[RMDB]
Description: Structure probing data (2A3) for a 207-nucleotide construct. The reactions ran in a buffer of 150 mM KOAc, 10 mM MgCl2 and 150 mM bicine (pH 8.5), at 24 C. 2A3 adducts were read by reverse transcription with SuperScript II with manganese.
RNA sequence: GGGAACGACUCGAGUAGAGUCGAAAACUCUUCUCUUCCCUGGCGACUCUUCUUCGAUUCGGACCGGCUCAUCUCGACAAGAGGCGGCAGUCCUCAGUGCUCUUACUCUUUUCUGUAAAGAGGAGACUCCUGGACUCGCCGCCCAAGUUCGAGCAUGGUAGAUUCUUAGGUUCGCCUAAGAAUCUACAAAAGAAACAACAACAACAAC
Reactivity to 2A3 in 0.01 (KOAc 150mM, MgCl2 10mM, bicine 150mM(pH8.5), 24C), signal-to-noise 3, nucleotides 027 to 156: c070u100c060u300u110c110u080c030u120u120c020c050c040u020g130g030c010g000a010c000u000c000u030u000c000u170u090c030g000a020u000u030c000g030g010a010c000c000g090g000c080u060c050a070u010c020u000c000g000a010c040a140a070g080a150g070g000c020g000g020c000a000g000u000c020c000u040c030a050g020u020g050c060u010c000u030u180a300c000u080c020u060u120u120u070c130u210g300u300a020a030a020g000a000g010g000a000g000a000c010u030c020c020u020g000g000a000c010u050c120g000c010c000g010c000c000c000a000a030g000u070u010c010g020a010g010c030a020u050g020